[RMDB]
RNA sequence: GGGAACGACUCGAGUAGAGUCGAAAAUUCAGACCCACUUAGCAGAUGGGGAAACCAAGGCCCAGAGUGGGAAUAAUCUGUCAAGGUCCCAAUGAGGCCAGUUGACUCUGGACUAGAACCAGGCCUGACAAUAUGGUGACUUCGGUCACCAUAUUGUAAAAGAAACAACAACAACAAC
Reactivity to DMS in 0.01 (KOAc 150mM, MgCl2 10mM, bicine 150mM(pH8.5), 24C), signal-to-noise 3, nucleotides 027 to 126: u000u000c040a060g010a130c020c000c010a030c020u010u000a090g020c140a100g000a180u000g000g020g000g010a110a100a150c040c080a100a150g010g010c040c040c040a130g000a020g020u000g040g020g020a150a040u000a100a190u000c040u000g000u000c140a070a140g010g000u010c000c000c020a120a120u030g000a050g020g000c010c000a050g010u000u010g010a120c110u010c060u010g000g010a060c040u010a080g020a050a090c090c100a150g020g010c040c010u010g000
Reactivity to 2A3 in 0.01 (KOAc 150mM, MgCl2 10mM, bicine 150mM(pH8.5), 24C), signal-to-noise 1, nucleotides 027 to 126: u030u000c010a000g000a110c000c000c000a030c010u060u050a110g090c040a020g090a300u110g000g000g000g110a120a050a000c090c010a100a060g210g050c000c050c010a000g000a010g050u020g000g000g000a020a020u080a020a030u010c040u060g050u100c070a060a080g030g030u030c000c020c000a000a090u200g020a000g000g000c000c000a000g050u060u080g080a040c110u040c050u050g000g040a090c040u070a080g060a070a010c010c010a010g010g000c010c050u010g000